Structure probing data (DMS and 2A3) for a 177-nucleotide construct. DMS adducts were read by reverse transcription with MarathonRT. The RNA was probed in 150 mM KOAc, 10 mM MgCl2 and 150 mM bicine (pH 8.5) at 24 C.
[RMDB]
RNA sequence: GGGAACGACUCGAGUAGAGUCGAAAAGAUAUGGAGUCACUGGGCUCGCAUACGAAACUCGGAAACGAGGUCCCGUAUGAACUACGAGCCGUGACUCCUAAGUCAAAGUCUCUCUUCGGAGAGACAACUGCACAUAUUUCUUCGGAAAUAUGUGCAGAAAAGAAACAACAACAACAAC
Reactivity to DMS in 0.01 (KOAc 150mM, MgCl2 10mM, bicine 150mM(pH8.5), 24C), signal-to-noise 2, nucleotides 027 to 126: g000a060u000a300u000g010g010a020g000u000c000a040c010u000g060g030g020c000u000c000g020c020a010u000a000c030g050a040a050a160c000u000c000g030g000a070a100a150c000g020a000g000g010u010c290c110c010g000u000a000u010g000a070a080c160u000a300c020g000a010g010c000c010g020u000g010a020c000u000c000c000u000a000a040g020u010c090a090a060a070g000u000c010u000c010u000c000u020u000c190g030g000a040g000a000g000a000c010a020a080
Reactivity to 2A3 in 0.01 (KOAc 150mM, MgCl2 10mM, bicine 150mM(pH8.5), 24C), signal-to-noise 2, nucleotides 027 to 126: g020a020u060a070u140g030g010a010g000u000c020a020c090u200g100g160g000c010u010c010g040c000a000u010a010c000g020a100a050a070c010u020c020g040g000a090a080a070c010g010a010g000g080u210c070c050c000g000u000a010u020g000a140a100c050u190a030c300g000a010g000c000c000g000u000g000a000c010u030c020c000u000a010a010g000u010c030a050a000a080g000u000c000u000c000u000c010u060u050c250g120g020a000g020a000g000a020c000a000a000